[RMDB]
RNA sequence: GGGAACGACUCGAGUAGAGUCGAAAAGUAUCUUGAUUCACGUGAUAAAAAACCAAUUACCAUGUAUGUAAGCUCCCCAGGUGGUUCUGUACACGAUGGUCUAGGUAUUAAAGAUGUAGCUAAGAACUCAAAGACUACUAUUCGUAGUAGUCUUUGAAAAAGAAACAACAACAACAAC
Reactivity to 2A3 in 0.01 (KOAc 150mM, MgCl2 10mM, bicine 150mM(pH8.5), 24C), signal-to-noise 3, nucleotides 027 to 126: g030u020a020u030c010u030u070g010a040u160u180c030a000c050g020u020g040a100u280a060a120a020a010a010a020c030c000a040a030u080u020a040c030c020a060u090g030u100a080u110g120u050a150a100g030c050u010c000c000c000c020a000g000g050u020g000g000u020u040c010u050g030u040a010c030a000c050g140a200u010g010g000u000c010u010a010g000g040u030a030u050u080a070a050a010g100a050u120g040u070a000g010c000u030a050a010g060a080a030c010
Reactivity to DMS in 0.01 (KOAc 150mM, MgCl2 10mM, bicine 150mM(pH8.5), 24C), signal-to-noise 7, nucleotides 027 to 126: g010u000a020u000c010u010u000g010a060u000u010c050a050c030g020u010g010a130u030a000a070a060a070a050a050c090c100a050a090u010u010a060c020c050a070u010g010u000a070u010g010u000a070a100g010c110u000c020c000c010c060a080g010g020u000g000g010u000u000c050u000g010u010a090c040a020c030g010a090u000g000g010u000c020u000a050g000g010u000a020u000u000a050a090a110g000a070u000g010u010a040g010c060u010a070a080g010a090a100c150